[RMDB]
RNA sequence: GGGAACGACUCGAGUAGAGUCGAAAAGCGCUAAACAGGAUGUUUCUCUCCUUAGUAAGUGCUAUAAGGCUAUGAAUGCAUAUCCUCUUGUAGUCACUCCUCUUGUUUCAGCAGGCAUAUUUGGUGUAAAUCGGUGUGUUCGCACACCGAAAAAGAAACAACAACAACAAC
Reactivity to DMS in 0.01 (KOAc 150mM, MgCl2 10mM, bicine 150mM(pH8.5), 24C), signal-to-noise 3, nucleotides 027 to 129: g020c010g040c000u060a020a230a030c220a070g000g000a050u000g040u010u000u000c140u000c000u020c030c000u000u040a040g000u000a160a010g020u010g030c040u020a000u020a080a100g000g000c030u030a110u040g040a090a080u050g000c140a080u090a000u040c070c000u010c070u060u010g050u030a020g060u020c050a130c070u020c010c000u010c190u050u030g000u040u030u020c060a110g010c030a050g010g000c060a000u010a050u030u010u030g000g000u010g020u010a010a040a050
Reactivity to 2A3 in 0.01 (KOAc 150mM, MgCl2 10mM, bicine 150mM(pH8.5), 24C), signal-to-noise 6, nucleotides 027 to 129: g000c020g000c020u050a010a000a010c020a010g000g010a060u080g130u080u260u000c130u000c010u020c000c000u000u000a010g010u020a030a000g000u020g000c000u000a010u010a040a020g020g000c030u020a050u200g130a140a080u270g070c100a040u090a060u170c030c000u040c020u030u030g040u060a000g010u040c000a010c050u040c000c000u030c060u090u100g060u010u040u000c010a000g010c010a020g020g000c010a010u030a030u040u060u090g090g010u060g020u100a050a110a060
Structure probing data (DMS and 2A3) for a 170-nucleotide construct. It was measured as part of the RMDB library 15KLIB. For 2A3 the reverse transcriptase was SuperScript II with manganese. For DMS the reverse transcriptase was MarathonRT. Values are in units of 0.01, from 0 to 300, in steps of 10. The DMS profile rests on 11,181 reads.